[RMDB]
RNA sequence: GGGAACGACUCGAGUAGAGUCGAAAAGAAUGGAAGCCGGCGGCACCUCGCUAACGGCCAAGAAUUGGAGCCAAUCAAUUCUUGCGGAGAACUGUGAAUGCGCAAACCAACCCUUGGCCAUCGCGUCCUUGGAUGAAUAAUUCGUUAUUCAUCCAAGAAAAGAAACAACAACAACAAC
Reactivity to 2A3 in 0.01 (KOAc 150mM, MgCl2 10mM, bicine 150mM(pH8.5), 24C), signal-to-noise 6, nucleotides 027 to 126: g060a070a060u140g020g050a080a030g030c020c020g060g030c030g010g000c040a030c030c020u020c020g000c020u030a100a020c050g000g000c000c000a000a000g010a020a040u030u010g020g010a020g020c020c020a010a070u040c000a010a000u050u010c000u010u060g060c090g060g150a060g010a050a040c090u120g030u060g240a100a050u140g020c080g000c090a060a100a110c010c010a010a030c040c000c000u010u010g000g000c000c010a060u070c050g010c020g050u070c010
Reactivity to DMS in 0.01 (KOAc 150mM, MgCl2 10mM, bicine 150mM(pH8.5), 24C), signal-to-noise 9, nucleotides 027 to 126: g000a110a080u010g000g010a110a120g020c030c040g010g030c110g010g020c040a100c050c050u000c040g010c030u000a100a150c150g000g000c020c010a010a000g010a040a070u000u000g010g010a150g010c060c070a050a090u010c010a030a070u000u000c000u000u000g020c180g010g000a070g010a030a030c150u010g010u000g010a070a070u000g010c130g010c040a060a100a070c030c020a030a040c050c030c010u000u000g000g010c000c010a090u000c200g010c050g010u010c100